[RMDB]
RNA sequence: GGGAACGACUCGAGUAGAGUCGAAAAGAAAACACUUAUAUUAGUAAUAGGCACUAAUAAUGAUAACAAAGGCUGCCCUUUGUUGGGUCCUGGGCAUAGCACGUAGAUUCACUUGUAAUCUGUACAAGUGCCCUGUGAGAAGGGUGCAUAUCACACAUCGACUGCUAUAUUUCGAUAUAGCAGUCGAAAAAGAAACAACAACAACAAC
Reactivity to DMS in 0.01 (KOAc 150mM, MgCl2 10mM, bicine 150mM(pH8.5), 24C), signal-to-noise 1, nucleotides 027 to 156: g050a170a120a140a100c020a040c050u050u010a190u010a090u010u010a070g050u000a180a170u000a100g030g020c070a080c000u000a050a090u010a050a130u010g000a130u000a060a080c070a090a090a030g010g010c050u010g000c110c020c000u000u000u020g030u000u000g020g020g000u010c010c010u000g020g000g010c000a000u000a120g040c040a050c060g000u000a040g010a090u010u000c050a110c110u000u000g030u000a030a050u010c090u010g020u000a050c000a020a100g030u000g030c020c030c020u010g000u020g000a110g040a090a080g000g000g000u010g020c020a060u000a110u000c040a030c000a020c040a170
Reactivity to 2A3 in 0.01 (KOAc 150mM, MgCl2 10mM, bicine 150mM(pH8.5), 24C), signal-to-noise 2, nucleotides 027 to 156: g040a020a080a020a000c050a000c000u240u170a170u100a110u300u120a090g030u020a100a180u080a300g070g000c040a010c030u000a010a020u120a070a070u070g060a070u110a150a000c010a050a140a000g040g010c100u080g030c040c000c000u040u020u080g060u030u060g010g000g010u030c030c030u030g000g000g000c010a010u020a040g000c020a010c100g000u010a000g020a050u080u030c020a010c040u010u040g030u070a010a010u020c060u110g080u080a040c000a020a130g030u000g010c000c000c000u060g030u060g000a090g010a030a020g000g010g000u010g050c030a050u080a050u160c010a000c000a020c010a130

Source: RMDB library OK3TST, as collected in RNAgym. This 207-nucleotide RNA was probed chemically with DMS and 2A3. For 2A3, 757 sequencing reads were counted. The reactions ran in a buffer of 150 mM KOAc, 10 mM MgCl2 and 150 mM bicine (pH 8.5), at 24 C. For DMS the reverse transcriptase was MarathonRT.